[RMDB]
RNA sequence: GGGAACGACUCGAGUAGAGUCGAAAACAUUGCGACCGCCAUAUCGCUCGGAUGGGUGGCAAUGCAGGCUUCGCUUACGCCUACCACCGCGUGCUGACGGCUAAAGCCUUCAAGCGCCGCGCAGCCGCGAGACAGUGCUGUUCGCAGCACUGUCUCGAAAAGAAACAACAACAACAAC
Reactivity to DMS in 0.01 (KOAc 150mM, MgCl2 10mM, bicine 150mM(pH8.5), 24C), signal-to-noise 2, nucleotides 027 to 126: c030a020u000u000g010c030g010a000c040c040g000c090c040a110u010a140u000c130g020c180u000c160g010g010a040u000g010g030g000u000g000g020c030a010a020u000g010c090a120g010g010c000u000u010c180g020c070u010u000a050c170g000c020c010u000a180c060c050a120c210c010g020c030g000u000g030c010u000g000a090c070g010g000c040u000a110a110a140g020c020c040u000u010c160a020a110g010c060g020c030c020g030c060g040c020a020g030c040c050g010